RNA sequence: GGGAACGACUCGAGUAGAGUCGAAAAGCCUGACGCCACGGGCGAUCCAGCUGCGGGUGCGCCAGGCCGGCGUCCGCGAGCUGGGCCAGCACCUGCACCCGCACAUGCUGCGGCACUCCUUCGCCAAAGCACUAAUGGGAUUCGUCCCAUUAGUGCUAAAAGAAACAACAACAACAAC
Reactivity to 2A3 in 0.01 (KOAc 150mM, MgCl2 10mM, bicine 150mM(pH8.5), 24C), signal-to-noise 3, nucleotides 027 to 126: g020c010c010u030g060a060c060g050c040c000a070c070g040g000g050c010g010a060u060c020c030a010g020c030u010g010c000g010g020g030u100g030c020g030c030c030a080g030g060c010c010g030g020c030g060u070c060c030g030c060g090a040g020c020u150g000g000g030c010c000a000g030c010a040c020c060u050g010c010a020c010c000c000g060c000a030c010a130u160g000c040u020g010c040g020g000c010a030c040u070c010c030u080u080c040g010c040c000a090a030
Reactivity to DMS in 0.01 (KOAc 150mM, MgCl2 10mM, bicine 150mM(pH8.5), 24C), signal-to-noise 3, nucleotides 027 to 126: g000c000c010u000g000a080c150g010c030c020a100c170g020g040g020c010g010a090u010c060c040a070g000c120u000g010c000g010g000g010u000g000c030g000c060c070a100g010g010c070c050g010g000c020g000u000c030c070g000c050g010a160g000c000u000g010g000g010c040c040a160g010c020a110c120c090u010g010c030a040c070c010c000g030c030a060c160a080u000g010c040u010g000c160g010g020c080a080c080u000c020c050u020u000c070g000c060c040a060a180
Chemical mapping of a 177-nucleotide RNA with 2A3 and DMS. 2A3 adducts were read by reverse transcription with SuperScript II with manganese. The reactions ran in a buffer of 150 mM KOAc, 10 mM MgCl2 and 150 mM bicine (pH 8.5), at 24 C. The data come from the RNA Mapping Database (RMDB), library OK2TST. Reactivities are given for positions 27 through 126.